[RMDB]
An RNA of 177 nucleotides, treated with 2A3 and DMS and read out base by base.
The 2A3 profile rests on 1,867 reads.
It was measured as part of the RMDB library M2PK50.
For DMS the reverse transcriptase was MarathonRT.
The reactions ran in a buffer of 150 mM KOAc, 10 mM MgCl2 and 150 mM bicine (pH 8.5), at 24 C.
2A3 adducts were read by reverse transcription with SuperScript II with manganese.

RNA sequence: GGGAACGACUCGAGUAGAGUCGAAAACGGGAUAGCUUCGGCUAUCCCGAAAGAGCUAGCAAGGUUCCGCUAGCAAUGAAAAGAAAAGGAACCAAAAGAAAAAAAGUAAGGGGUUCGCCCCUUACAACAUGGCAUAGUAGUUCGCUACUAUGCCAUGAAAAGAAACAACAACAACAAC
Reactivity to 2A3 in 0.01 (KOAc 150mM, MgCl2 10mM, bicine 150mM(pH8.5), 24C), signal-to-noise 1, nucleotides 027 to 126: c010g010g030g010a000u000a000g010c020u050u050c200g040g030c020u010a000u000c000c000c000g020a000a000a000g010a020g000c000u000a000g000c020a220a120g000g000u020u000c000c000g000c020u000a000g000c020a010a170u140g030a050a010a030a100g090a000a040a010a030g030g000a000a010c020c030a000a090a050a000g050a080a130a010a010a000a000a000g000u030a000a010g000g000g000g010u030u060c090g100c000c000c000c000u010u000a000c000a000a000
Reactivity to DMS in 0.01 (KOAc 150mM, MgCl2 10mM, bicine 150mM(pH8.5), 24C), signal-to-noise 1, nucleotides 027 to 126: c090g000g010g000a010u000a000g000c000u030u000c260g020g000c000u000a000u000c000c010c000g000a000a030a020g000a160g000c000u000a010g000c010a090a120g000g000u000u000c000c010g010c020u000a000g000c000a030a070u020g010a030a030a130a210g020a030a030a060a140g000g000a010a030c000c010a110a040a120a140g010a000a070a060a070a110a130a160g010u000a000a000g010g010g010g020u000u000c300g000c000c000c000c000u000u000a010c000a030a070